[RMDB]
RNA sequence: GGGAACGACUCGAGUAGAGUCGAAAAUGGAGAUCGUCCCUCGCGGUGCUAUGUAUGAUGGACAAUCUGGGCUGAUUAAGCAUAAAACUAGUCGGGCGCCGAUUAUGUUUUAUCAGAACAUUAAACAUGUGCUGAGUGAUGACAUGGCGUGGCCGUGCUCAGUGUGGUAAUUCGUUACCACACUGAGAAAAGAAACAACAACAACAAC
Reactivity to DMS in 0.01 (KOAc 150mM, MgCl2 10mM, bicine 150mM(pH8.5), 24C), signal-to-noise 2, nucleotides 027 to 156: u010g010g010a030g000a060u000c030g000u000c000c010c010u010c080g030c080g050g020u000g040c040u000a090u020g020u040a060u010g010a140u010g000g010a070c070a070a070u000c060u000g020g000g010c000u000g010a090u000u000a100a090g050c050a130u000a030a030a080a080c050u000a050g010u000c030g010g020g020c080g040c030c020g000a110u020u000a020u010g000u030u000u010u000a080u000c010a050g020a040a020c020a030u000u000a100a150a140c200a090u000g010u000g010c000u000g000a110g020u000g020a070u010g020a050c020a080u000g010g020c030g000u010g030g000c010c020g000u000g010
Reactivity to 2A3 in 0.01 (KOAc 150mM, MgCl2 10mM, bicine 150mM(pH8.5), 24C), signal-to-noise 4, nucleotides 027 to 156: u130g040g010a040g010a110u040c010g030u000c020c000c000u000c010g010c030g040g040u110g030c040u070a050u070g060u030a080u160g080a050u040g040g010a030c040a040a040u040c070u070g000g050g000c000u020g040a090u090u050a060a010g020c050a020u080a080a100a030a050c070u050a030g050u020c010g000g020g040c150g010c000c010g000a020u080u060a040u130g020u000u030u010u040a030u010c000a000g010a020a010c010a020u090u190a120a140a040c100a060u040g020u020g000c000u020g010a030g030u110g090a110u140g010a010c020a040u050g020g000c030g010u030g050g010c010c000g010u010g030
Source: RMDB library OK3TST, as collected in RNAgym. Structure probing data (DMS and 2A3) for a 207-nucleotide construct. As a SHAPE reagent, 2A3 marks flexible, mostly unpaired nucleotides at the ribose 2'-OH. For DMS, 5,344 sequencing reads were counted. Values cover nucleotides 27 to 156. The reactions ran in a buffer of 150 mM KOAc, 10 mM MgCl2 and 150 mM bicine (pH 8.5), at 24 C.